[RMDB]
RNA sequence: GGGAACGACUCGAGUAGAGUCGAAAAUGGGCUACCAGUAAGCGAAAAAUGAUACAGGACGAAAAAGACAUAAUUCGAGAUUUUUCAGGAUGGAUUUUUUUAGGUAUCUAUCAAAACUAUUCUGAUGCAACGUAGAGCACGUUCGCGUGCUCUACAAGACCAUUAAAUACUUCGGUAUUUAAUGGUCAAAAGAAACAACAACAACAAC
Reactivity to 2A3 in 0.01 (KOAc 150mM, MgCl2 10mM, bicine 150mM(pH8.5), 24C), signal-to-noise 4, nucleotides 027 to 156: u030g040g010g000c000u030a020c020c010a020g030u080a030a030g040c040g090a100a060a020a050a010u110g010a030u070a070c040a060g080g010a040c040g080a070a030a000a030a020g060a020c040a040u160a080a090u170u080c040g020a030g030a190u070u170u040u110u090c000a010g000g000a010u000g050g010a060u030u000u010u000u020u020u020a050g030g020u170a080u180c010u010a020u010c000a000a000a020a010c000u020a020u030u020c000u000g020a030u060g060c040a060a040c080g000u000a000g000a000g010c000a000c000g000u020u010c040g000c000g020u000g000c000u000c000u000a000c000a000a010
Reactivity to DMS in 0.01 (KOAc 150mM, MgCl2 10mM, bicine 150mM(pH8.5), 24C), signal-to-noise 2, nucleotides 027 to 156: u010g000g010g030c050u000a100c040c000a130g000u010a060a080g010c040g010a020a070a050a140a110u020g000a180u000a070c070a120g000g020a110c050g000a050a070a080a080a110g010a110c060a070u000a050a170u000u000c020g000a140g010a180u000u000u000u000u030c000a000g020g020a030u000g000g010a030u030u000u030u000u000u000u000a050g020g020u000a090u010c000u000a010u010c050a010a040a020a040c000u000a050u000u000c020u000g010a050u020g000c070a050a090c090g010u000a020g000a040g010c000a010c000g010u000u000c300g040c040g010u000g010c000u010c000u000a000c010a030a130
This 207-nucleotide RNA was probed chemically with 2A3 and DMS. Conditions: 150 mM KOAc, 10 mM MgCl2 and 150 mM bicine (pH 8.5), 24 C. Reactivities are rounded to 0.1 and cut off at 0 and 3. It was measured as part of the RMDB library M2RFOK.